[RMDB]
RNA sequence: GGGAACGACUCGAGUAGAGUCGAAAACUAGUGCUGGUGCUGGUGCUGGUGGUGCUGUAGUUCCUGAUCCAUCUACUGCAAAUCCUGGCGAUAGACUGGUGGUCAAUAGUGCUGGCAACGCUUUAGAAUACAAGCCAGAGCCUAGCAUUGAUACUGCUGUAAGAUGUGGAUUCGUCCACAUCUUACAAAAAGAAACAACAACAACAAC
Reactivity to 2A3 in 0.01 (KOAc 150mM, MgCl2 10mM, bicine 150mM(pH8.5), 24C), signal-to-noise 3, nucleotides 027 to 156: c010u010a020g000u010g110c020u050g020g050u050g030c030u020g010g010u030g060c030u040g020g050u030g010g060u030g000c020u030g020u050a030g030u050u060c020c030u080g030a030u010c030c010a030u030c020u050a030c040u060g010c010a040a080a070u040c020c040u030g080g000c090g030a060u030a070g070a070c040u040g040g020u030g020g010u030c000a000a030u040a150g000u010g010c000u010g000g000c010a040a030c020g020c010u020u020u050a080g070a130a070u190a170c050a050a000g000c000c010a010g000a010g090c020c010u080a010g010c020a000u070u010g020a060u090a100c050u130g050c020
Reactivity to DMS in 0.01 (KOAc 150mM, MgCl2 10mM, bicine 150mM(pH8.5), 24C), signal-to-noise 2, nucleotides 027 to 156: c020u000a070g020u000g000c010u010g000g000u010g020c010u010g040g000u010g010c040u000g000g020u000g010g010u000g000c050u000g040u000a050g010u000u000c020c030u020g000a140u010c050c050a100u010c010u000a040c040u000g040c030a050a160a140u000c060c060u000g010g000c010g020a130u000a040g020a030c090u000g010g020u010g010g020u000c060a080a130u000a110g030u000g010c030u000g020g010c000a060a180c110g000c070u000u000u000a130g020a170a140u000a110c100a040a110g030c000c020a140g000a190g010c010c020u010a120g020c010a070u000u000g010a120u020a070c080u000g010c140

Source: RMDB library OK3TST, as collected in RNAgym. Structure probing data (2A3 and DMS) for a 207-nucleotide construct.